[RMDB]
RNA sequence: GGGAACGACUCGAGUAGAGUCGAAAACUCUUGUUAGGUGAAAGUUGAUGGUCGCCGUGUCAGUCCAUGCCUUUGAAAACAGAUCUAUGUAGUAGGGAGUCGAGAACCUAUGAGAGUUAGAACUUGCUAUGCCUUGGACUCUUCGGAGUCCAAGGAAGACAAUCUCCGGAUUCGUCCGGAGAUUGUCAAAAGAAACAACAACAACAAC
Reactivity to DMS in 0.01 (KOAc 150mM, MgCl2 10mM, bicine 150mM(pH8.5), 24C), signal-to-noise 1, nucleotides 027 to 156: c040u000c020u010u000g020u010u000a030g000g000u010g000a070a040a170g010u010u010g000a140u010g040g000u000c060g010c020c040g090u000g010u000c010a140g040u020c040c090a080u000g000c030c040u000u000u000g000a090a070a100a130c060a040g010a100u000c030u010a060u000g010u000a130g020u000a050g000g030g000a160g040u000c090g040a160g050a080a070c010c000u000a020u020g000a110g000a050g010u000u000a060g000a060a160c090u000u000g010c070u000a020u000g000c010c000u000u010g020g010a000c000u000c000u000u010c300g030g030a080g000u000c010c010a000a010g010g000a000a020
Reactivity to 2A3 in 0.01 (KOAc 150mM, MgCl2 10mM, bicine 150mM(pH8.5), 24C), signal-to-noise 2, nucleotides 027 to 156: c010u000c020u030u020g090u060u140a030g060g000u030g080a190a090a090g040u120u170g060a060u070g060g020u040c020g020c070c010g020u000g040u080c030a020g010u000c000c010a060u060g090c000c000u150u060u110g190a110a110a020a010c040a020g030a040u050c000u060a030u090g070u030a090g010u010a000g020g040g050a030g010u050c030g000a000g010a170a010c030c000u030a060u070g030a020g000a000g030u010u050a040g010a030a040c060u030u040g030c050u060a050u170g020c010c000u000u000g020g000a020c000u000c000u040u030c220g070g000a030g000u020c000c000a000a000g000g000a000a000